[RMDB]
RNA sequence: GGGAACGACUCGAGUAGAGUCGAAAACGGACGACCGUCUCCUUUCACAUACACGGAUAUCUUACCGGGUUUCGUCAACGAGUACGGGCGCUCACCGCGUAAGAGCACUUCACGCCGCUUCGAUGGAGCCAUCAGACCAAUUCGUUGGUCUGAUGGCAAAAGAAACAACAACAACAAC
Reactivity to DMS in 0.01 (KOAc 150mM, MgCl2 10mM, bicine 150mM(pH8.5), 24C), signal-to-noise 2, nucleotides 027 to 126: c070g020g020a070c120g010a080c060c020g010u010c100u000c010c040u010u000u040c100a020c110a120u000a070c140a070c030g000g000a110u000a140u000c100u000u020a150c050c000g010g030g010u000u010u010c030g020u000c070a080a030c170g020a130g000u000a040c170g000g000g010c050g010c040u000c040a190c040c040g000c070g030u010a030a030g010a070g010c010a060c100u000u000c070a160c150g010c050c000g000c090u000u000c030g020a170u000g020g020a220
Reactivity to 2A3 in 0.01 (KOAc 150mM, MgCl2 10mM, bicine 150mM(pH8.5), 24C), signal-to-noise 1, nucleotides 027 to 126: c000g020g080a010c010g030a120c000c000g000u000c010u010c000c000u080u110u170c050a030c010a020u160a050c070a020c040g070g040a080u020a120u240c030u050u110a060c020c000g080g000g000u010u150u140c040g010u000c020a110a070c040g020a030g060u090a020c060g010g010g010c010g040c030u040c020a100c020c040g030c030g010u040a050a000g000a030g070c020a010c040u050u080c050a020c110g000c000c010g060c080u100u050c030g020a080u030g000g020a000